[RMDB]
RNA sequence: GGGAACGACUCGAGUAGAGUCGAAAAUUCAAGGUAGCUUGGAGAAAGGAGAGUUUAAUGUGGUUCAAGGAGAUACAUUCAUGUUAUUUCGCUGUAUGUUUCCUGUGUUUGAGCAGCACUAGUUAUCCAGUCACGAAAUAAAAGGUAACACAAAAUAUCGUACGCUCAUAUUCGUAUGAGCGUACGAAAAAGAAACAACAACAACAAC
Reactivity to 2A3 in 0.01 (KOAc 150mM, MgCl2 10mM, bicine 150mM(pH8.5), 24C), signal-to-noise 4, nucleotides 027 to 156: u070u000c040a020a030g040g030u060a060g060c020u000u050g050g010a040g050a060a050a030g030g030a060g010a000g010u070u110u110a110a060u110g010u080g050g070u050u070c040a080a050g070g000a040g000a060u050a060c010a020u000u180c010a020u110g050u090u110a130u040u100u080c030g020c020u020g060u080a060u040g050u050u070u020c020c050u030g010u000g030u030u080u080g010a020g010c020a020g010c000a000c000u010a010g030u000u020a030u010c040c010a010g020u050c020a030c120g050a060a060a000u100a020a100a020a000g050g020u070a050a010c030a010c040a140a030a050a060u160a050
Reactivity to DMS in 0.01 (KOAc 150mM, MgCl2 10mM, bicine 150mM(pH8.5), 24C), signal-to-noise 2, nucleotides 027 to 156: u010u010c070a100a160g040g050u020a080g070c020u000u000g020g040a120g000a100a060a080g010g010a120g030a100g020u030u000u000a040a090u000g050u000g020g010u000u000c030a070a100g030g000a100g000a150u000a050c040a110u010u010c070a110u020g000u010u000a100u000u010u010c110g050c050u000g020u000a080u000g000u000u000u000c020c030u000g030u000g030u000u010u020g010a200g070c020a130g050c110a020c010u000a010g020u010u020a060u000c030c030a130g040u030c060a130c060g010a060a030a050u000a040a020a070a090g000g000u000a030a040c040a130c060a030a050a020a080u000a140